[RMDB]
RNA sequence: GGGAACGACUCGAGUAGAGUCGAAAAUAUAUGAACUAUCCAGAAAAGGCACACUGGUAGAGAGAAAAAGCAGAUUGUAGGGCUGGUGUGAGAGUGAUGAUUAACUGCAAACUGGCACAAGAGAACUAUUUGUAGUGAUGGAAAGGUUCUAAGACUGAACACGUUUAGAGUUCGCUCUAAACGUGUUAAAAGAAACAACAACAACAAC
Reactivity to 2A3 in 0.01 (KOAc 150mM, MgCl2 10mM, bicine 150mM(pH8.5), 24C), signal-to-noise 3, nucleotides 027 to 156: u140a000u030a040u090g010a020a020c020u030a040u030c010c010a010g100a050a130a010a020g110g000c030a010c010a010c040u020g010g010u100a030g000a000g000a000g030a030a090a020a040a020g020c040a010g040a120u080u110g070u100a030g040g040g010c010u020g010g000u010g000u040g010a050g010a020g010u050g020a040u020g000a020u060u110a070a000c010u040g000c020a030a050a100c070u040g030g010c050a010c020a110a030g030a010g020a110a010c020u030a050u090u030u040g030u030a050g010u030g050a060u030g010g060a040a040a050g050g000u030u020c010u050a040a070g040a070c040u060g040
Reactivity to DMS in 0.01 (KOAc 150mM, MgCl2 10mM, bicine 150mM(pH8.5), 24C), signal-to-noise 3, nucleotides 027 to 156: u000a090u000a080u000g000a070a100c040u000a090u010c030c030a100g010a090a070a100a120g010g000c060a060c060a110c040u000g030g030u000a110g040a170g000a170g000a100a070a100a170a140g000c040a050g000a110u000u010g010u000a120g010g000g030c090u000g000g030u020g000u010g000a070g010a100g010u010g000a100u000g000a080u000u010a080a110c040u000g000c040a040a040a080c060u000g010g030c070a100c070a080a110g020a100g010a090a050c040u000a070u000u010u030g020u010a030g040u000g010a130u000g010g020a060a070a100g000g000u000u010c040u000a070a100g020a140c040u000g000

The record gives the reactivity of an RNA of 207 nucleotides to 2A3 and DMS. For 2A3, 2,600 sequencing reads were counted. For DMS the reverse transcriptase was MarathonRT. As a SHAPE reagent, 2A3 marks flexible, mostly unpaired nucleotides at the ribose 2'-OH. For DMS, 4,162 sequencing reads were counted. Values cover nucleotides 27 to 156.